[RMDB]
RNA sequence: GGGAACGACUCGAGUAGAGUCGAAAAGAUAUGGAAAUCAUAGUGCUUUUGACGGACCUACCAUCGGAAACGAUGGUAGUCCGAUAAGCACGUGAUUUCCUAAGUCAAACGCUGCUUCGGCAGCGAAGAUAUUAUCUAUGUUCGCAUAGAUAAUAUCAAAAGAAACAACAACAACAAC
Reactivity to DMS in 0.01 (KOAc 150mM, MgCl2 10mM, bicine 150mM(pH8.5), 24C), signal-to-noise 9, nucleotides 027 to 126: g010a040u010a300u000g000g000a010a000a010u000c000a010u000a140g030u000g010c000u000u000u010u010g020a280c180g000g000a020c300c120u000a010c000c000a010u010c000g010g000a140a110a170c010g010a010u000g000g010u000a000g010u000c000c000g010a050u000a010a010g010c000a010c000g000u000g000a010u000u000u000c000c000u000a020a080g010u000c040a130a110a240c030g010c000u000g010c010u000u010c210g030g020c000a000g010c010g000a020a060
Reactivity to 2A3 in 0.01 (KOAc 150mM, MgCl2 10mM, bicine 150mM(pH8.5), 24C), signal-to-noise 9, nucleotides 027 to 126: g020a020u070a040u140g000g010a000a010a000u010c010a000u130a300g010u000g000c020u120u150u140u270g270a180c030g000g010a010c020c090u020a000c010c000a010u000c000g020g040a110a060a040c010g000a000u000g000g010u000a000g000u000c000c000g000a010u010a000a000g000c000a000c000g000u000g000a000u000u000u000c000c000u000a080a010g030u000c040a080a050a120c020g000c000u010g000c000u050u100c300g170g000c000a000g000c000g010a030a020